RNA sequence: GGGAACGACUCGAGUAGAGUCGAAAAUUGCUAAUGUCAUUGUGCAGAAUAUAGGAUCAUUAAAAAAGCAACCUGAAUUGGCGCGUUGUGGGCGUGCAUUUAAAAUCAUUCUAGACUCGGUUACAAUGCUUAAAACCAAUUUCCGUGGAUAUUAUAGUCGACUUCCUUAAUUCGUUAAGGAAGUCGAAAAAGAAACAACAACAACAAC
Reactivity to 2A3 in 0.01 (KOAc 150mM, MgCl2 10mM, bicine 150mM(pH8.5), 24C), signal-to-noise 2, nucleotides 027 to 156: u120u050g040c070u080a120a000u080g040u080c030a020u040u030g000u050g010c030a020g090a140a010u150a010u040a060g030g040a040u060c000a000u030u170a040a090a000a100a000a000g020c010a030a040c000c090u060g020a100a090u020u040g070g000c000g000c000g100u020u020g030u080g080g050g010c060g000u000g030c000a010u010u050u160a080a130a040a000u110c030a000u080u070c010u020a010g010a060c000u000c040g000g020u010u000a020c030a030a000u000g040c010u110u150a000a160a020a020c000c020a020a020u020u030u010c000c040g010u020g080g000a010u110a050u300u300a090u160a070g040
Reactivity to DMS in 0.01 (KOAc 150mM, MgCl2 10mM, bicine 150mM(pH8.5), 24C), signal-to-noise 1, nucleotides 027 to 156: u000u000g010c020u000a100a090u010g020u000c020a040u010u010g020u000g000c050a080g000a050a040u010a090u000a070g030g020a030u010c020a110u000u010a030a010a090a030a070a140g030c040a050a080c030c040u010g010a070a080u000u000g000g000c000g040c070g000u010u000g030u010g010g010g080c060g030u010g010c040a170u000u000u000a110a060a070a060u020c060a050u010u000c010u010a100g000a050c020u000c020g020g050u010u000a040c020a050a070u000g010c020u010u000a040a090a130a050c070c030a040a120u010u000u010c020c010g020u010g060g030a190u000a050u020u000a120u010a070g010